[RMDB]
The record gives the reactivity of an RNA of 207 nucleotides to 2A3 and DMS.
RNA sequence: GGGAACGACUCGAGUAGAGUCGAAAACUGCCUUUCGAGGCAGAAAUCGCGUACUACACGUCUUUACGAAGAACGGAGCUACCCACCAUGGAUCCCAAAUAGGAUCCAUGAGGCUCCGGGAGUAAACGUGUAUCGCAACUAGGUCGUUCGCGACCAACUAAAACAAUCAGUUCGCUGAUUGUUUUAGAAAAGAAACAACAACAACAAC
Reactivity to 2A3 in 0.01 (KOAc 150mM, MgCl2 10mM, bicine 150mM(pH8.5), 24C), signal-to-noise 7, nucleotides 027 to 156: c000u010g000c010c010u100u120u130c300g110a030g010g000c020a000g030a050a090a010u180c090g000c000g020u080a120c050u010a010c020a000c000g040u040c140u050u050u020a050c080g140a300a080g020a150a020c000g010g000a000g000c010u050a100c030c040c050a040c040c000a000u010g000g000a000u010c020c050c050a120a270a050u250a070g000g000a000u000c000c000a000u000g000a010g000g000c000u000c000c000g000g000g000a040g000u010a000a010a010c000g000u000g010u000a020u260c000g000c000a010a050c080u120a080g000g000u000c010g020u080u110c210g010c010g110a000c000c010a010a030
Reactivity to DMS in 0.01 (KOAc 150mM, MgCl2 10mM, bicine 150mM(pH8.5), 24C), signal-to-noise 3, nucleotides 027 to 156: c000u000g000c000c010u000u000u000c170g020a030g000g020c000a000g000a030a040a080u000c070g020c000g030u000a090c110u010a030c010a010c020g010u000c120u000u010u000a010c020g030a190a160g020a210a230c010g020g000a050g000c000u000a010c070c000c010a300c160c010a020u000g010g010a010u000c000c000c020a050a140a230u010a050g000g010a010u000c000c010a000u000g010a040g020g010c000u000c010c000g010g020g000a150g020u000a010a030a020c000g020u000g000u000a010u000c000g000c000a090a060c070u010a120g030g000u000c000g000u000u010c100g020c010g030a160c000c000a020a160

The 2A3 profile rests on 9,405 reads. For 2A3 the reverse transcriptase was SuperScript II with manganese. The RNA was probed in 150 mM KOAc, 10 mM MgCl2 and 150 mM bicine (pH 8.5) at 24 C.